About this RNA
Structure probing data (2A3) for a 177-nucleotide construct. The RNA was probed in 150 mM KOAc, 10 mM MgCl2 and 150 mM bicine (pH 8.5) at 24 C. The 2A3 profile rests on 1,454 reads.
RNA sequence: GGGAACGACUCGAGUAGAGUCGAAAAGAUAUGGACUUCCUGGGUAGGGAGCUCGUCGGAAACGACGGAGCAUCGAUCUACGGAAGUCCUAAGUCAAAACGUCUGUGAACUUCGGUUCACAGACGAAGCUUCCUGUAGACUUCGGUCUACAGGAAGCAAAAGAAACAACAACAACAAC
Reactivity to 2A3 in 0.01 (KOAc 150mM, MgCl2 10mM, bicine 150mM(pH8.5), 24C), signal-to-noise 1, nucleotides 027 to 126: g020a010u060a030u070g000g000a000c000u010u010c020c010u060g190g040g090u150a160g040g300g040a060g000c000u000c010g000u000c040g020g020a070a030a000c030g040a010c110g040g160a070g000c050a100u060c020g110a110u010c010u000a040c110g010g010a020a000g000u000c000c000u000a000a000g000u000c000a000a030a080a200c000g000u000c010u020g010u010g000a010a000c000u030u120c300g160g000u020u020c010a020c000a000g000a000c000g000a000a010